[RMDB]
RNA sequence: GGGAACGACUCGAGUAGAGUCGAAAAAGCAGAAGCUCAUCCACCAGAUGUUGACACAGCCCGCAGCCUUGGGCGACCCACAGGACUCCUCUUAUUUAACUGGCAUUUGGUAGGAGAACAGGGGCAGAUUAAAGGUUGGGUUCGCCCAACCUUUAAUAAAAGAAACAACAACAACAAC
Reactivity to DMS in 0.01 (KOAc 150mM, MgCl2 10mM, bicine 150mM(pH8.5), 24C), signal-to-noise 1, nucleotides 027 to 126: a070g030c040a110g020a160a100g040c030u000c070a160u010c050c020a090c110c030a090g000a060u000g030u010u000g010a100c160a100c110a090g030c000c010c020g030c080a040g000c070c050u000u000g010g000g000c040g000a080c020c030c020a060c110a080g000g000a100c020u000c050c020u020c050u010u010a080u000u000u000a050a100c200u010g010g000c080a070u000u000u000g030g010u000a030g010g000a080g000a040a090c110a030g010g000g030g000c100a070g000